RNA sequence: GGGAACGACUCGAGUAGAGUCGAAAAGGGGUCGAAAUUGUCAGUAGAUGCGAAUGGCUGAUGACCAUAACUGAAGCCUCCACGGUUAUGCAAGGCCAAACAUCUACUUGGAUUUAUUUCGACGGAGGCACCCAAAAACUGUGGUUCGCCACAGUAAGACCAAUCCGAUGUUCGCAUCGGAUUGGUCAAAAGAAACAACAACAACAAC
Reactivity to 2A3 in 0.01 (KOAc 150mM, MgCl2 10mM, bicine 150mM(pH8.5), 24C), signal-to-noise 1, nucleotides 027 to 156: g070g030g010g010u000c000g000a000a000a030u120u110g080u070c110a010g000u030a000g000a040u050g180c200g180a120a270u120g000g000c000u000g030a220u050g010a070c000c000a000u000a000a000c020u040g040a080a000g050c010c000u000c000c010a020c030g000g010u000u000a000u000g000c050a210a170g000g000c000c000a020a030a020c000a000u000c000u000a000c000u030u100g120g030a000u040u090u240a100u050u000u050c010g000a000c000g000g010a000g000g010c000a020c000c010c000a110a110a000a040a000c000u000g030u000g000g110u110u120c270g030c090c000a060c000a000g000u000a000a100